[RMDB]
Overview:
Structure probing data (DMS and 2A3) for a 177-nucleotide construct. The RNA was probed in 150 mM KOAc, 10 mM MgCl2 and 150 mM bicine (pH 8.5) at 24 C. It was measured as part of the RMDB library OK2TRN. For 2A3 the reverse transcriptase was SuperScript II with manganese. For DMS the reverse transcriptase was MarathonRT.
RNA sequence: GGGAACGACUCGAGUAGAGUCGAAAAGAUGGUUCUAUAUCCAAUUCGAGAGGCGCAGCCCUUAGUUUUGCCUUAUGAUGGAAUUUGAUAAUUCCCUAACAUUAGUUCAAACUAGAUUGGUCAAGGACUUAGCGUAUCUCUUCGGAGAUACGCUAAGAAAAGAAACAACAACAACAAC
Reactivity to DMS in 0.01 (KOAc 150mM, MgCl2 10mM, bicine 150mM(pH8.5), 24C), signal-to-noise 4, nucleotides 027 to 126: g010a110u000g010g000u000u000c030u000a100u010a150u020c010c030a070a060u000u000c090g010a130g020a130g020g020c030g040c120a050g040c040c020c040u000u000a030g010u000u000u010u000g020c300c010u000u000a040u010g000a150u010g010g010a030a020u010u010u000g030a150u010a030a090u000u000c020c000c280u010a110a070c060a010u000u000a040g000u000u000c100a020a030a030c020u000a030g010a070u000u000g020g000u000c150a090a090g000g000a160
Reactivity to 2A3 in 0.01 (KOAc 150mM, MgCl2 10mM, bicine 150mM(pH8.5), 24C), signal-to-noise 2, nucleotides 027 to 126: g100a090u150g030g010u050u020c020u020a080u010a040u220c010c010a050a050u050u140c060g020a010g000a070g160g070c180g000c240a050g010c000c000c000u000u010a010g040u000u010u070u110g000c000c000u050u050a030u030g070a020u070g000g000a010a050u020u030u060g220a190u170a240a020u010u010c020c010c000u000a100a030c000a030u040u120a010g010u070u110c040a030a030a030c010u020a000g010a070u030u030g050g020u030c060a080a060g020g000a010